[RMDB]
RNA sequence: GGGAACGACUCGAGUAGAGUCGAAAACAAUAUUACUUUUCGAUGCUGGUUGCCAGAUCUCAAUCUACUGAUAUCGUCUGUGAAACAUCACGUACCGGAACACUGGCUAGAAAAAUCAUUAAAAAGAUGGAGGAUAUGGUGGUCGACGGAUACGGACGUUUACAGUCUGAUUCGUCAGACUGUAAACAAAAGAAACAACAACAACAAC
Reactivity to 2A3 in 0.01 (KOAc 150mM, MgCl2 10mM, bicine 150mM(pH8.5), 24C), signal-to-noise 6, nucleotides 027 to 156: c040a030a090u140a080u290u170a120c060u050u050u020u060c040g030a030u110g020c020u030g030g050u110u090g020c030c020a060g000a150u050c050u020c060a030a100u020c030u110a090c060u100g050a060u030a050u130c040g040u010c040u070g060u030g050a110a080a040c040a090u070c020a010c070g030u030a060c020c050g040g050a060a020c010a010c040u030g020g000c020u020a020g080a030a060a010a000a000u080c040a020u050u230a070a070a050a050a010g030a020u070g010g030a030g020g010a020u040a050u100g030g010u000g000g000u000c020g030a010c010g000g000a020u040a080c040g020g040a020c080
Reactivity to DMS in 0.01 (KOAc 150mM, MgCl2 10mM, bicine 150mM(pH8.5), 24C), signal-to-noise 3, nucleotides 027 to 156: c050a130a140u000a140u000u000a150c030u010u000u010u000c010g020a080u000g030c010u010g030g000u010u000g010c010c050a080g040a100u000c050u010c100a080a140u010c040u000a150c070u000g010a040u000a050u000c020g040u000c030u000g030u000g060a120a080a090c040a050u010c030a050c060g030u000a040c040c030g030g000a090a090c100a060c050u020g020g000c030u000a160g010a030a050a080a080a070u000c020a070u010u010a040a070a070a140a080g010a120u000g020g010a100g000g000a130u010a050u000g010g040u000g030g020u000c010g000a070c040g010g000a100u000a090c040g000g010a090c070

An RNA of 207 nucleotides, treated with 2A3 and DMS and read out base by base. Conditions: 150 mM KOAc, 10 mM MgCl2 and 150 mM bicine (pH 8.5), 24 C. Source: RMDB library OK3TST, as collected in RNAgym. DMS adducts were read by reverse transcription with MarathonRT.